[RMDB]
RNA sequence: GGGAACGACUCGAGUAGAGUCGAAAAGAGCGUCGAGAGACGAAGAGAAGUGCACCGAUCAGCAAUGGCGAACGUAAUGGUGCACAAGAGUAAGUCAGUGUAACGUUCUCAGGGCACUGGAGGCAGACACUCCCUGGUAUUUCGAUACCAGGGAGUGAAAAGAAACAACAACAACAAC
Reactivity to 2A3 in 0.01 (KOAc 150mM, MgCl2 10mM, bicine 150mM(pH8.5), 24C), signal-to-noise 5, nucleotides 027 to 126: g060a000g020c010g000u010c020g010a040g010a020g000a060c040g020a070a030g080a000g030a210a000g010u000g010c000a000c010c000g050a080u130c070a020g080c010a080a300u260g120g000c000g040a010a060c040g010u080a090a010u170g010g010u020g010c000a000c000a010a010g030a010g060u180a140a000g050u050c020a020g030u000g010u090a150a040c030g020u050u000c030u020c010a030g020g000g000c010a000c050u020g030g000a000g020g100c030a010g030a040
Reactivity to DMS in 0.01 (KOAc 150mM, MgCl2 10mM, bicine 150mM(pH8.5), 24C), signal-to-noise 5, nucleotides 027 to 126: g020a060g030c010g000u000c000g000a210g000a190g000a030c020g000a070a090g000a110g020a120a090g030u000g020c010a020c000c000g000a150u010c120a180g000c160a130a120u010g020g030c090g010a070a080c140g010u020a080a100u030g010g020u010g000c010a010c000a030a070g020a100g000u030a100a060g010u020c010a030g020u000g000u020a100a100c090g010u000u000c020u000c000a120g010g000g000c020a010c040u000g000g000a090g020g010c090a090g040a220
Structure probing data (2A3 and DMS) for a 177-nucleotide construct. Values cover nucleotides 27 to 126. High 2A3 reactivity points to a flexible backbone, as in loops and unpaired stretches. For DMS, 10,660 sequencing reads were counted. Reactivities are rounded to 0.1 and cut off at 0 and 3. The 2A3 profile rests on 4,343 reads.